[RMDB]
RNA sequence: GGGAACGACUCGAGUAGAGUCGAAAAGCCCGUUCCACGGCUCCCUUCCAGAAGGGCGGGGGUGGCCUGGAGCGUCGGGCCCCAGCAGUCCGUGGAAUUCACCCUCUUACCGCUUCUCCACACUCCUAACCUGAUAGGUUCGCCUAUCAGAAAAGAAACAACAACAACAAC
Reactivity to DMS in 0.01 (KOAc 150mM, MgCl2 10mM, bicine 150mM(pH8.5), 24C), signal-to-noise 9, nucleotides 027 to 129: g010c030c010c010g010u000u000c020c000a020c030g040g000c030u040c010c000c000u000u000c070c050a200g060a200a110g080g040g010c200g010g000g000g000g000u080g020g040c040c020u030g020g030a070g010c070g040u050c050g000g030g000c070c020c030c000a070g020c060a050g010u040c020c020g050u030g020g030a070a050u060u000c090a100c060c010c000u040c030u030u060a090c060c030g000c030u040u030c030u020c020c030a030c040a060c060u030c010c000u040a050a060c130
Reactivity to 2A3 in 0.01 (KOAc 150mM, MgCl2 10mM, bicine 150mM(pH8.5), 24C), signal-to-noise 9, nucleotides 027 to 129: g040c000c000c000g000u020u000c010c000a030c030g000g000c010u060c020c000c020u020u030c120c030a200g050a300a140g160g020g000c060g020g010g000g000g030u150g030g010c000c010u020g020g020a080g030c030g060u090c020g010g030g000c000c000c020c000a020g050c030a010g040u030c010c010g030u030g020g040a020a010u080u060c020a090c010c010c010u030c010u040u090a080c020c020g020c020u050u010c010u000c020c010a030c000a030c040u030c010c010u040a060a070c010